[RMDB]
RNA sequence: GGGAACGACUCGAGUAGAGUCGAAAAGAUAUGGACGAGAAGGAGAACAGAUCCUGAUGAACUACCUGUCCCAUCGGAAACGAUGGAACAGGCAUCAGGAUCUGUUCUCUAGUUCUCGUCCUAAGUCGCUAAGUAUCUUCUUCGGAAGAUACUUAGCAAAAGAAACAACAACAACAAC
Reactivity to DMS in 0.01 (KOAc 150mM, MgCl2 10mM, bicine 150mM(pH8.5), 24C), signal-to-noise 2, nucleotides 027 to 126: g010a100u010a300u000g000g000a010c010g010a010g020a100a130g000g010a000g010a030a010c000a020g010a000u000c000c000u000g000a010u000g000a060a040c130u020a300c020c010u010g020u000c000c000c000a010u010c000g000g000a120a140a130c010g000a010u010g000g000a000a000c000a000g000g000c000a000u010c000a030g000g020a000u000c000u000g000u000u010c000u000c000u000a050g000u010u000c010u000c000g000u000c000c000u010a000a060g010u020c100
Conditions: 150 mM KOAc, 10 mM MgCl2 and 150 mM bicine (pH 8.5), 24 C. An RNA of 177 nucleotides, treated with DMS and read out base by base. It was measured as part of the RMDB library TTRINS.